Chemical mapping of a 177-nucleotide RNA with 2A3.
RNA sequence: GGGAACGACUCGAGUAGAGUCGAAAAUACGAAACUAAAGGUCUUACCUUGGAAGAAAUUGAUGAAUUGUACUCCACCAAAGUCCUUCCAUGGAAAUCAGCUGGUUGGGUGCCACCUUCCGAAGAAGGCGGAGCAGUACUUUCGAGUACUGCUCCGCAAAAGAAACAACAACAACAAC
Reactivity to 2A3 in 0.01 (KOAc 150mM, MgCl2 10mM, bicine 150mM(pH8.5), 24C), signal-to-noise 1, nucleotides 027 to 126: u190a000c080g080a150a160a040c020u190a000a030a300g030g000u000c060u000u070a040c000c000u030u000g020g000a020a020g000a000a180a140u150u260g060a060u010g000a020a180u070u050g000u080a000c000u000c000c080a000c040c000a000a170a140g030u000c000c000u150u040c020c090a010u230g000g000a070a100a090u220c040a000g000c010u000g060g050u070u020g000g030g000u040g000c000c000a000c000c000u000u130c010c050g000a050a120g000a080a000g220

Overview: For 2A3, 481 sequencing reads were counted. Source: RMDB library OK1LIB, as collected in RNAgym.